Source: RMDB library TTRDES, as collected in RNAgym. The record gives the reactivity of an RNA of 177 nucleotides to 2A3 and DMS. For 2A3, 4,367 sequencing reads were counted. Conditions: 150 mM KOAc, 10 mM MgCl2 and 150 mM bicine (pH 8.5), 24 C. For DMS, 2,557 sequencing reads were counted.
RNA sequence: GGGAACGACUCGAGUAGAGUCGAAAAGAUAUGGAAUGCCACGGUCUAUGAAGUACGUCGGAAACGACGUAUGGAGACCAGUGGUCAUUCCUAAGUCAAAAGCCUUCGAAGUUCGCUUCGAAGGCAAGUCCUUUAGCAUGUUCGCAUGCUAAAGGACAAAAGAAACAACAACAACAAC
Reactivity to 2A3 in 0.01 (KOAc 150mM, MgCl2 10mM, bicine 150mM(pH8.5), 24C), signal-to-noise 2, nucleotides 027 to 126: g010a010u090a030u170g000g010a020a010u000g030c000c010a000c000g020g000u000c020u040a300u220g000a030a010g020u010a010c000g000u020c000g000g020a090a050a030c020g020a010c000g050u000a010u000g000g000a010g010a020c000c090a010g000u000g010g000u060c000a000u010u000c000c000u000a080a000g000u000c020a060a000a120a140g000c000c000u000u000c010g010a010a010g010u020u220c220g140c250u010u000c000g020a000a000g040g000c010a000a000
Reactivity to DMS in 0.01 (KOAc 150mM, MgCl2 10mM, bicine 150mM(pH8.5), 24C), signal-to-noise 3, nucleotides 027 to 126: g000a020u000a300u010g000g020a000a010u000g010c010c000a010c010g000g020u000c010u000a250u020g000a140a230g000u000a000c000g020u010c000g000g000a110a170a250c000g010a000c000g020u000a000u000g000g000a030g010a010c010c000a060g030u000g010g000u000c040a000u000u000c000c020u000a040a150g000u000c040a080a100a180a200g000c000c000u000u000c000g010a010a020g030u000u010c300g010c000u000u000c000g000a000a000g000g010c010a000a010